[RMDB]
RNA sequence: GGGAACGACUCGAGUAGAGUCGAAAAGAUAUGGAAUGCUUAGGGAGUCCCUCGGAAACGAGAGGACAUCGAUCUAAGUCAUUCCUAAGUCAAAAGCAUAAUUUGUUCUUCGGAACAAAUUAUGCAAUCGAAACUUAUACUUCGGUAUAAGUUUCGAAAAAGAAACAACAACAACAAC
Reactivity to DMS in 0.01 (KOAc 150mM, MgCl2 10mM, bicine 150mM(pH8.5), 24C), signal-to-noise 3, nucleotides 027 to 126: g010a030u000a300u000g000g010a020a010u000g000c000u000u000a000g010g010g000a050g020u000c000c000c000u010c000g000g000a090a070a140c000g010a020g010a130g040g000a020c000a050u000c140g000a080u020c000u000a000a010g000u010c020a010u000u000c000c000u000a020a120g010u010c040a060a060a150a130g020c000a000u010a010a000u000u000u000g000u000u000c000u000u020c240g020g000a000a000c000a000a000a000u000u010a010u000g010c020a040a010
Reactivity to 2A3 in 0.01 (KOAc 150mM, MgCl2 10mM, bicine 150mM(pH8.5), 24C), signal-to-noise 2, nucleotides 027 to 126: g020a010u060a040u120g000g010a010a000u010g010c020u010u000a010g110g110g000a020g010u010c000c010c000u000c000g010g020a060a060a010c000g030a020g060a230g050g000a010c010a080u110c020g040a040u040c010u020a000a000g060u140c020a000u000u000c000c000u000a060a010g050u050c020a030a030a050a140g000c000a010u000a000a020u010u000u000g000u000u000c000u040u050c300g070g000a000a000c000a000a000a000u010u010a010u010g010c000a000a020
Chemical mapping of a 177-nucleotide RNA with DMS and 2A3.
For 2A3 the reverse transcriptase was SuperScript II with manganese.
It was measured as part of the RMDB library TTRDEL.
The reactions ran in a buffer of 150 mM KOAc, 10 mM MgCl2 and 150 mM bicine (pH 8.5), at 24 C.